[RMDB]
RNA sequence: GGGAACGACUCGAGUAGAGUCGAAAAGAUAUGGACACGUGGACAUGUUUAUCUUCGGAAACGAAGAUGAAACAACAGCCACAAGUCCUAAGUCAAAUCCAUAAACGUGUUCGCACGUUUAUGGAAACUAAUUGACCUUGUUCGCAAGGUCAAUUAGAAAAGAAACAACAACAACAAC
Reactivity to DMS in 0.01 (KOAc 150mM, MgCl2 10mM, bicine 150mM(pH8.5), 24C), signal-to-noise 5, nucleotides 027 to 126: g010a000u000a100u000g000g000a010c000a100c300g000u000g010g010a030c080a140u000g010u010u000u000a020u000c000u000u000c000g010g000a040a040a080c000g010a000a000g000a020u000g000a010a000a030c040a090a090c240a110g010c000c000a000c010a160a300g000u010c000c000u010a010a070g010u000c020a090a110a120u000c000c000a000u000a000a000a010c000g010u000g010u010u020c220g010c000a000c000g010u000u000u000a010u000g000g000a000a030a100
Reactivity to 2A3 in 0.01 (KOAc 150mM, MgCl2 10mM, bicine 150mM(pH8.5), 24C), signal-to-noise 3, nucleotides 027 to 126: g000a000u030a010u050g000g000a000c010a000c100g000u010g000g020a090c050a200u260g020u010u020u010a000u000c010u010u010c010g010g000a040a020a010c020g000a000a000g020a010u050g060a010a000a020c100a060a080c090a070g020c000c000a030c010a010a020g000u000c010c000u000a020a000g010u000c020a070a010a160u010c000c000a000u000a000a000a000c000g000u010g050u090u130c300g030c130a000c000g000u010u010u000a000u000g000g000a020a000a000

The record gives the reactivity of an RNA of 177 nucleotides to DMS and 2A3. Conditions: 150 mM KOAc, 10 mM MgCl2 and 150 mM bicine (pH 8.5), 24 C. It was measured as part of the RMDB library TTRDEL. For 2A3 the reverse transcriptase was SuperScript II with manganese. DMS adducts were read by reverse transcription with MarathonRT.